[RMDB]
RNA sequence: GGGAACGACUCGAGUAGAGUCGAAAAUGAAGGUGCUUGUGAUUUUAUGAUACUUCUGAAUGUUUCUGGUAGGAAACUGUGCUACUGUCCUUUUGUUGUCAUGCAGUCUGAGUGAGGGAAGCCAUUGGUAGUUGCAUGGUUUCGACCAUGCAACUACAAAAGAAACAACAACAACAAC
Reactivity to DMS in 0.01 (KOAc 150mM, MgCl2 10mM, bicine 150mM(pH8.5), 24C), signal-to-noise 1, nucleotides 027 to 126: u010g000a110a080g000g030u010g010c040u000u000g000u000g000a150u000u010u010u000a070u020g010a100u010a080c070u000u010c040u000g020a110a050u000g010u000u000u000c010u000g020g040u000a080g000g000a050a040a050c040u000g010u000g000c030u000a060c050u000g000u010c040c030u000u000u000u000g020u000u000g020u000c070a070u010g000c060a060g000u010c060u000g000a090g030u000g000a130g020g010g010a080a050g010c050c060a060u010u010g020